[RMDB]
RNA sequence: GGGAACGACUCGAGUAGAGUCGAAAAUCCCACAAAUACUGUACUUUUGAUCUGCAUUUGGUUAAAAAAUAUCUGUGUAUAAGUGGACCCUCACAGUUCAAACCCAUGUUGUUCAAGGGCCAACUGUGGAUUUGUAAUUAUUCGUAAUUACAAAUCCAAAAGAAACAACAACAACAAC
Reactivity to DMS in 0.01 (KOAc 150mM, MgCl2 10mM, bicine 150mM(pH8.5), 24C), signal-to-noise 4, nucleotides 027 to 126: u000c030c000c010a060c120a060a090a050u030a060c060u010g000u000a030c030u000u010u000u030g000a050u010c020u000g010c080a060u000u010u000g010g000u010u010a000a010a060a060a080a060u020a060u010c040u000g010u000g000u010a050u010a040a120g020u020g000g000a060c050c020c010u010c030a040c040a030g000u010u000c100a060a070a100c010c000c120a120u000g010u000u000g000u000u000c070a050a050g020g000g000c160c070a020a050c040u000g000u000
Reactivity to 2A3 in 0.01 (KOAc 150mM, MgCl2 10mM, bicine 150mM(pH8.5), 24C), signal-to-noise 9, nucleotides 027 to 126: u010c000c000c000a010c010a010a050a010u240a040c060u110g060u120a060c020u060u090u060u070g050a050u050c010u060g050c070a130u050u110u150g030g050u080u080a090a090a030a020a050a050u150a080u090c040u030g040u000g020u030a030u030a230a050g040u080g100g060a130c000c010c010u030c010a020c000a010g010u070u070c040a060a020a070c000c010c000a020u060g010u050u040g010u030u040c040a040a040g020g010g000c030c040a030a030c040u030g010u030